[RMDB]
RNA sequence: GGGAACGACUCGAGUAGAGUCGAAAACGUCUCACUUUCGAGUGAGACGAAAGAAAAAGGCUACGACCGGCCAAAUAAAGGUCCAAAAAGAUCGAAAGAUCAAAAGUUGGCAGUUCGCUGCCAACAACUUUAGGCUAAUAUUCGUAUUAGCCUAAAGAAAAGAAACAACAACAACAAC
Reactivity to 2A3 in 0.01 (KOAc 150mM, MgCl2 10mM, bicine 150mM(pH8.5), 24C), signal-to-noise 2, nucleotides 027 to 126: c010g010u000c000u000c010a010c000u060u080u090c260g120a020g000u010g000a020g000a000c000g000a010a050a010g040a030a120a010a010a010g000g000c020u040a040c080g010a000c000c020g000g010c020c000a020a020a000u180a030a060a000g010g000u010c000c000a060a050a010a060a090g010a000u010c010g040a080a030a030g020a010u010c000a000a000a040a110g010u000u000g000g000c010a010g000u040u070c140g050c070u000g000c000c000a000a000c000a000a010
Reactivity to DMS in 0.01 (KOAc 150mM, MgCl2 10mM, bicine 150mM(pH8.5), 24C), signal-to-noise 3, nucleotides 027 to 126: c030g010u000c000u010c000a000c000u010u000u010c160g030a020g020u000g020a020g010a000c010g000a030a070a080g000a040a130a100a180a160g010g010c010u010a080c300g020a030c020c010g000g020c000c020a050a120a100u010a010a080a120g000g000u010c010c220a070a030a050a060a080g000a020u000c000g000a140a100a100g000a000u010c020a090a040a080a130g000u000u000g000g000c000a000g010u000u000c230g010c000u000g000c000c000a000a000c010a070a090